The record gives the reactivity of an RNA of 177 nucleotides to DMS and 2A3.
Values cover nucleotides 27 to 126.
The DMS profile rests on 1,325 reads.
In probing experiments dimethyl sulfate is read out at A N1 and C N3, which are open when not base-paired.
The reactions ran in a buffer of 150 mM KOAc, 10 mM MgCl2 and 150 mM bicine (pH 8.5), at 24 C.
RNA sequence: GGGAACGACUCGAGUAGAGUCGAAAAAUCUGCGCGCGCAUUUCGUCGAGUUCGCGCGGCUGCACGGCCUUCACGGUGCCGUACGUGCCGACCGGCAUGAAGAUCGGCGUCUCGACGACGCCGUGAACGAUUAGGCGAGGUUCGCCUCGCCUAAUCGAAAAGAAACAACAACAACAAC
Reactivity to DMS in 0.01 (KOAc 150mM, MgCl2 10mM, bicine 150mM(pH8.5), 24C), signal-to-noise 2, nucleotides 027 to 126: a120u000c040u000g020c030g020c040g000c110g070c080a090u000u010u010c080g020u000c110g020a120g040u010u000c070g010c010g020c000g010g020c080u040g000c110a020c080g000g030c010c010u000u020c180a090c220g010g030u000g020c020c000g020u000a090c010g010u000g020c040c020g000a150c130c030g000g040c110a060u010g000a130a070g000a100u000c010g000g010c000g020u010c010u000c140g000a060c140g000a020c190g020c000c000g000u000g000a060a080
Reactivity to 2A3 in 0.01 (KOAc 150mM, MgCl2 10mM, bicine 150mM(pH8.5), 24C), signal-to-noise 1, nucleotides 027 to 126: a000u040c030u050g000c030g000c010g000c000g000c050a030u030u000u170c070g020u000c040g050a030g050u030u050c020g000c000g020c010g030g000c000u030g000c010a000c020g000g020c010c000u110u190c090a070c080g020g080u210g000c020c000g000u030a140c020g020u000g020c000c020g130a210c060c090g020g000c040a060u080g120a070a020g020a130u020c000g000g020c000g030u020c020u030c030g140a070c030g000a000c000g030c050c000g020u020g020a030a060